[RMDB]
RNA sequence: GGGAACGACUCGAGUAGAGUCGAAAAUCGCCUUGUGCGACCGCGCUUAAAUGUGCGGCGGCAUCAUCAAUGCAUUGACGUUCUGCGGCGCUUAACAGCGCGGCGUCGGCAGUUAGCGCGCCGGUCAGCUAUCGCAAAAUUUCGAUUUUGCGAUAGCAAAAGAAACAACAACAACAAC
Reactivity to 2A3 in 0.01 (KOAc 150mM, MgCl2 10mM, bicine 150mM(pH8.5), 24C), signal-to-noise 5, nucleotides 027 to 126: u040c020g090c030c030u140u110g050u030g040c020g040a120c020c010g000c000g000c000u100u100a070a080a070u260g010u010g010c020g050g000c000g010g010c040a040u040c000a010u050c020a060a160u190g060c030a090u030u160g010a020c010g050u090u020c040u090g030c020g070g000c010g010c010u040u060a110a020c050a070g020c030g020c030g030g000c010g020u080c010g020g000c010a030g040u070u160a020g000c030g000c030g010c020c020g010g040u050c000a020
Reactivity to DMS in 0.01 (KOAc 150mM, MgCl2 10mM, bicine 150mM(pH8.5), 24C), signal-to-noise 2, nucleotides 027 to 126: u030c050g030c000c010u010u020g000u030g010c000g000a100c050c010g010c000g010c000u000u000a050a060a040u000g010u000g000c010g000g000c120g000g000c020a120u000c120a080u040c140a070a130u010g010c060a100u030u000g020a050c020g010u010u020c050u000g010c030g010g020c000g000c030u000u010a100a150c300a040g000c000g010c000g000g010c000g000u000c020g030g010c010a030g000u010u000a040g020c170g000c180g000c070c030g040g000u030c100a120
About this RNA: Source: RMDB library OK1LIB, as collected in RNAgym. The record gives the reactivity of an RNA of 177 nucleotides to 2A3 and DMS. The 2A3 profile rests on 4,124 reads. The RNA was probed in 150 mM KOAc, 10 mM MgCl2 and 150 mM bicine (pH 8.5) at 24 C. For DMS the reverse transcriptase was MarathonRT.